[RMDB]
RNA sequence: GGGAACGACUCGAGUAGAGUCGAAAACAAUAUCACUUUUGCCAUCGGCAUGGUGGGUUACAAACGCCUGAUGGAAACUCGCCCGAUGCCGCAGCAUAACGCCUUUGCGUGGUUCUAUCUUGGCGCAACUCAUAUCAGUCUUCGGACUGAUAUGAGUAAAAGAAACAACAACAACAAC
Reactivity to 2A3 in 0.01 (KOAc 150mM, MgCl2 10mM, bicine 150mM(pH8.5), 24C), signal-to-noise 4, nucleotides 027 to 126: c030a000a090u130a040u260c050a080c070u220u200u140u120g020c020c020a160u100c130g000g000c020a020u030g020g020u030g000g000g030u100u090a100c090a110a170a010c060g050c050c040u090g050a060u040g000g000a030a000a010c010u010c010g020c010c010c040g000a000u030g060c040c020g030c060a040g020c010a060u050a160a040c050g050c020c050u090u110u110g000c020g030u030g010g020u090u000c020u040a090u000c050u040u150g010g010c030g020c030a000
Reactivity to DMS in 0.01 (KOAc 150mM, MgCl2 10mM, bicine 150mM(pH8.5), 24C), signal-to-noise 4, nucleotides 027 to 126: c090a080a120u020a090u000c040a050c040u000u000u000u000g010c000c010a120u020c140g030g000c020a000u010g000g030u000g010g000g020u020u000a140c140a030a110a140c070g010c070c020u000g020a070u010g000g010a070a030a030c020u000c010g000c010c150c300g000a070u000g000c040c090g010c250a130g000c070a060u000a070a090c090g010c110c090u010u000u010g010c050g040u010g000g000u000u000c040u000a030u000c030u000u020g000g000c000g040c120a100

Structure probing data (2A3 and DMS) for a 177-nucleotide construct.
The RNA was probed in 150 mM KOAc, 10 mM MgCl2 and 150 mM bicine (pH 8.5) at 24 C.
The 2A3 profile rests on 3,672 reads.
The data come from the RNA Mapping Database (RMDB), library OK2TST.
For DMS, 3,265 sequencing reads were counted.
Values cover nucleotides 27 to 126.